Background:
Chemical mapping of a 177-nucleotide RNA with 2A3 and DMS. It was measured as part of the RMDB library OK1LIB. The RNA was probed in 150 mM KOAc, 10 mM MgCl2 and 150 mM bicine (pH 8.5) at 24 C.
[RMDB]
RNA sequence: GGGAACGACUCGAGUAGAGUCGAAAAUUGGGUCGGUGUGCAUUUUAAAGUCUAUAUGUAGUGAUUUGCAUCAAGGAUGUUUGCAAUUUUAUUGAUGUAGAACAAGGUAAAAAUCAGAGCGUACAGAUACGCACCGUAGUUUCGACUACGGUGCGUAAAAAGAAACAACAACAACAAC
Reactivity to 2A3 in 0.01 (KOAc 150mM, MgCl2 10mM, bicine 150mM(pH8.5), 24C), signal-to-noise 2, nucleotides 027 to 126: u100u000g120g000g000u110c000g000g040u150g000u000g000c040a060u000u000u230u300a100a120a100g040u060c010u020a190u000a020u180g050u020a150g020u010g130a050u110u000u030g000c000a000u000c110a000a020g130g050a080u020g020u130u120u090g000c000a000a100u060u060u070u000a200u200u080g080a020u000g000u150a000g000a080a130c000a050a020g150g110u300a220a120a000a000a000u080c040a000g000a000g140c110g000u100a000c010a020g000a000
Reactivity to DMS in 0.01 (KOAc 150mM, MgCl2 10mM, bicine 150mM(pH8.5), 24C), signal-to-noise 1, nucleotides 027 to 126: u070u000g000g060g000u080c000g100g000u000g040u000g000c150a090u040u050u000u000a000a080a140g000u000c120u000a070u010a010u060g040u050a060g010u020g000a070u000u050u000g000c030a000u000c080a080a030g010g000a040u010g000u020u020u020g000c100a080a040u000u000u000u000a050u040u000g010a020u020g000u000a030g000a060a190c080a160a020g010g030u050a050a060a060a010a090u000c050a000g020a250g000c080g000u020a070c170a120g030a080